The record gives the reactivity of an RNA of 177 nucleotides to 2A3 and DMS.
For DMS, 2,123 sequencing reads were counted.
DMS (dimethyl sulfate) methylates the pairing face of unpaired adenines and cytosines.
Values are in units of 0.01, from 0 to 300, in steps of 10.
The data come from the RNA Mapping Database (RMDB), library TTRDEL.
Conditions: 150 mM KOAc, 10 mM MgCl2 and 150 mM bicine (pH 8.5), 24 C.
[RMDB]
RNA sequence: GGGAACGACUCGAGUAGAGUCGAAAAGAUAUGGAGUGUGCGACGAUCGUCUGGUCGGAAACGACCAGGACGGGAGCACCUCCUAAGUCAAAAGUACUUGACACAUGUUCGCAUGUGUCAAGUACAACCUAACCGUUGUGUUCGCACAACGGUUAGGAAAAGAAACAACAACAACAAC
Reactivity to 2A3 in 0.01 (KOAc 150mM, MgCl2 10mM, bicine 150mM(pH8.5), 24C), signal-to-noise 2, nucleotides 027 to 126: g060a050u100a050u210g000g000a030g000u300g010u000g050c020g060a230c040g020a300u010c000g000u000c010u010g000g020u010c010g010g020a090a050a030c010g000a000c010c000a010g050g030a030c000g000g020g000a020g010c000a000c020c000u000c000c000u020a170a060g060u040c040a000a030a030a100g020u020a000c000u000u000g000a000c000a000c010a030u020g030u120u160c300g000c130a010u000g000u040g000u010c000a010a000g000u000a010c000a000a000
Reactivity to DMS in 0.01 (KOAc 150mM, MgCl2 10mM, bicine 150mM(pH8.5), 24C), signal-to-noise 2, nucleotides 027 to 126: g020a030u000a300u000g010g010a020g000u000g040u000g010c000g000a080c250g010a060u010c000g000u000c000u000g000g000u010c010g010g000a040a060a280c000g010a000c000c000a030g000g010a050c000g000g000g000a080g010c010a000c000c000u000c010c000u010a010a060g020u000c030a070a100a130a120g000u000a000c000u010u000g010a010c020a000c000a010u000g000u000u010c290g010c010a020u010g010u000g000u000c000a000a000g010u000a000c000a050a050